[RMDB]
RNA sequence: GGGAACGACUCGAGUAGAGUCGAAAAGGGAUGCAAGAUAUGGACCAACCGUGCGAAGAACGUUUGGAAAGCAUCGGAAACGAUUAAGCCAAACGGGAGCACCGUUGGUCCUAAGUCAAUAAUGGAACUCGAUGUGUAACUUCGGUUACACAUCGAGAAAAGAAACAACAACAACAAC
Reactivity to 2A3 in 0.01 (KOAc 150mM, MgCl2 10mM, bicine 150mM(pH8.5), 24C), signal-to-noise 1, nucleotides 027 to 126: g080g050g030a030u190g100c120a150a150g000a030u030a020u080g020g010a010c000c010a000a000c020c060g000u000g000c020g170a300a010g000a080a000c040g000u000u000u090g020g060a290a210a050g180c120a040u060c010g000g030a000a030a050c010g000a010u040u100a110a110g210c000c000a030a000a000c010g000g000g000a010g000c010a000c010c020g000u000u030g030g000u000c000c000u010a000a000g000u030c000a000a050u160a060a110u110g250g000a080a080
Reactivity to DMS in 0.01 (KOAc 150mM, MgCl2 10mM, bicine 150mM(pH8.5), 24C), signal-to-noise 2, nucleotides 027 to 126: g000g010g030a120u000g060c100a120a140g000a040u000a130u000g000g010a030c010c000a020a000c010c180g030u000g010c000g010a070a130g000a110a150c050g000u000u000u030g000g000a220a090a220g030c210a010u010c010g000g000a030a020a090c000g000a010u010u000a060a190g010c010c000a000a020a030c000g000g000g000a070g020c010a000c000c250g010u000u000g020g000u010c000c000u000a000a060g000u000c040a120a050u000a120a060u000g010g010a050a140

Chemical mapping of a 177-nucleotide RNA with 2A3 and DMS. It was measured as part of the RMDB library TTRDEL. 2A3 adducts were read by reverse transcription with SuperScript II with manganese. The DMS profile rests on 1,282 reads. Reactivities are given for positions 27 through 126. The reactions ran in a buffer of 150 mM KOAc, 10 mM MgCl2 and 150 mM bicine (pH 8.5), at 24 C.